Chemical mapping of a 207-nucleotide RNA with 2A3 and DMS.
DMS adducts were read by reverse transcription with MarathonRT.
2A3 adducts were read by reverse transcription with SuperScript II with manganese.
Reactivities are given for positions 27 through 156.
The RNA was probed in 150 mM KOAc, 10 mM MgCl2 and 150 mM bicine (pH 8.5) at 24 C.
The 2A3 profile rests on 2,242 reads.
[RMDB]
RNA sequence: GGGAACGACUCGAGUAGAGUCGAAAAAGGGCUCCCCCAGGCCCGCGAUCUCGCCCCGCAGGGGGUGCGUGAUGGCCACGCGCCGUUCGCUGAACGCUUCGUCCUGCAGGUAAGUCUCGCUGGCCCCGUAAAGAUGCAGAGCCGCGGCCGUCAAGUCAACAUGAUAUUCAUUCGUGAAUAUCAUGUUAAAAGAAACAACAACAACAAC
Reactivity to 2A3 in 0.01 (KOAc 150mM, MgCl2 10mM, bicine 150mM(pH8.5), 24C), signal-to-noise 3, nucleotides 027 to 156: a000g070g000g000c020u030c040c010c000c000c000a000g010g000c000c030c000g000c010g010a040u010c040u040c070g010c020c000c020c070g000c020a010g000g010g000g030g020u020g010c010g010u040g020a110u130g030g010c040c000a080c100g060c090g010c010c010g060u050u090c130g030c250u180g080a130a030c020g030c050u260u250c080g260u040c040c000u000g010c010a000g010g010u030a050a030g010u020c030u010c180g000c020u020g020g000c000c020c010c010g010u040a030a120a020g060a010u120g060c040a010g020a000g040c040c000g050c000g020g020c000c020g070u060c040a090a070g040u020c010
Reactivity to DMS in 0.01 (KOAc 150mM, MgCl2 10mM, bicine 150mM(pH8.5), 24C), signal-to-noise 2, nucleotides 027 to 156: a100g010g000g020c010u000c020c020c030c020c050a150g000g020c020c000c020g000c050g000a060u000c020u010c010g000c090c000c040c010g000c080a080g000g020g040g020g080u000g010c030g020u000g000a140u000g030g030c040c010a100c050g000c050g050c030c040g000u010u000c060g020c070u000g000a080a070c050g010c070u010u000c070g010u000c010c010u010g010c020a170g000g010u000a040a040g020u000c070u000c000g020c050u000g000g020c000c000c030c010g020u000a090a100a130g000a150u000g010c080a080g000a090g000c000c030g030c060g040g000c000c020g040u000c040a070a160g030u020c100